[RMDB]
About this RNA
This 207-nucleotide RNA was probed chemically with DMS and 2A3. For 2A3, 2,626 sequencing reads were counted. DMS adducts were read by reverse transcription with MarathonRT. Conditions: 150 mM KOAc, 10 mM MgCl2 and 150 mM bicine (pH 8.5), 24 C. The data come from the RNA Mapping Database (RMDB), library OK3TST. Values cover nucleotides 27 to 156.
RNA sequence: GGGAACGACUCGAGUAGAGUCGAAAAGCAGUUUCACUCACUGUAGACUCUGAGCGCAGAGUGACAGUCGUGCUACCACAUGCACGUGAUCAGAGUAUGUGUGAACUCUGACUGUCGACACAAUCGCUUGUGUCCUAUAUAAUGAAACUGGUGAGUCACGGAGCCAGCGAUUCGUCGCUGGCUCCGUAAAAGAAACAACAACAACAAC
Reactivity to DMS in 0.01 (KOAc 150mM, MgCl2 10mM, bicine 150mM(pH8.5), 24C), signal-to-noise 3, nucleotides 027 to 156: g030c030a030g020u010u010u000c010a030c000u010c050a120c060u000g010u000a020g020a000c010u000c010u010g000a300g080c120g070c040a040g020a100g010u000g010a030c000a020g010u000c020g030u000g010c030u000a280c070c050a040c110a080u010g030c030a140c000g030u000g000a140u000c110a120g010a120g020u000a030u000g020u000g050u000g030a040a050c010u010c010u010g020a000c010u010g060u000c000g000a030c010a020c030a030a100u000c170g020c130u000u000g020u000g000u000c010c020u000a040u000a020u000a060a030u000g000a020a010a020c010u000g010g010u020g000a160g000u000c050
Reactivity to 2A3 in 0.01 (KOAc 150mM, MgCl2 10mM, bicine 150mM(pH8.5), 24C), signal-to-noise 4, nucleotides 027 to 156: g130c000a000g000u000u000u010c000a000c020u000c010a080c020u030g000u010a000g010a000c000u010c010u020g030a060g180c090g000c040a000g000a000g010u000g000a000c000a000g020u040c000g010u000g010c040u100a130c020c070a030c020a080u050g000c000a030c050g090u090g100a110u230c080a020g010a000g060u030a040u090g190u030g070u060g020a060a010c010u000c040u100g000a010c000u000g000u000c010g010a000c000a000c000a000a220u220c040g010c190u000u000g000u000g000u000c000c000u000a000u000a010u040a020a030u020g010a010a010a000c010u000g010g130u090g030a050g070u130c060